[RMDB]
RNA sequence: GGGAACGACUCGAGUAGAGUCGAAAACAACUUCCCUUCGGGGAAGUUGAACCAUUCCCAAAUUCCACCUUGGUGAUGGCACCCGGAGAGCAGCCAUCACCACUCCGAGAGCCUUCGGGCUCUCGAACAUCCGAUUAGGAUUCGUCCUAAUCGGAUGAAAAGAAACAACAACAACAAC
Reactivity to DMS in 0.01 (KOAc 150mM, MgCl2 10mM, bicine 150mM(pH8.5), 24C), signal-to-noise 3, nucleotides 027 to 126: c000a010a010c000u000u000c000c010c000u000u020c150g020g010g000g010a010a000g000u000u000g010a050a050c160c120a300u000u000c000c000c000a060a100a150u000u000c060c110a080c230c130u000u000g010g030u000g000a010u010g000g000c010a180c150c060c070g020g000a080g000a090g010c080a180g010c000c000a020u000c010a000c010c030a010c190u000c070c010g000a010g010a020g010c000c000u000u010c190g020g020g030c000u000c010u000c000g010a040a120
Reactivity to 2A3 in 0.01 (KOAc 150mM, MgCl2 10mM, bicine 150mM(pH8.5), 24C), signal-to-noise 3, nucleotides 027 to 126: c000a000a000c000u010u000c000c010c000u000u050c230g030g000g000g000a000a000g000u000u000g000a010a020c020c010a050u010u010c020c000c000a060a070a020u140u030c060c020a120c040c070u050u120g000g010u010g010a000u000g010g000c020a070c020c120c120g160g070a170g000a030g110c100a010g000c000c000a000u000c000a000c010c000a000c000u000c010c010g000a000g000a000g010c010c000u060u070c220g070g030g000c000u000c000u000c000g000a000a010

An RNA of 177 nucleotides, treated with DMS and 2A3 and read out base by base. DMS adducts were read by reverse transcription with MarathonRT. For 2A3, 12,142 sequencing reads were counted. Values cover nucleotides 27 to 126. The reactions ran in a buffer of 150 mM KOAc, 10 mM MgCl2 and 150 mM bicine (pH 8.5), at 24 C.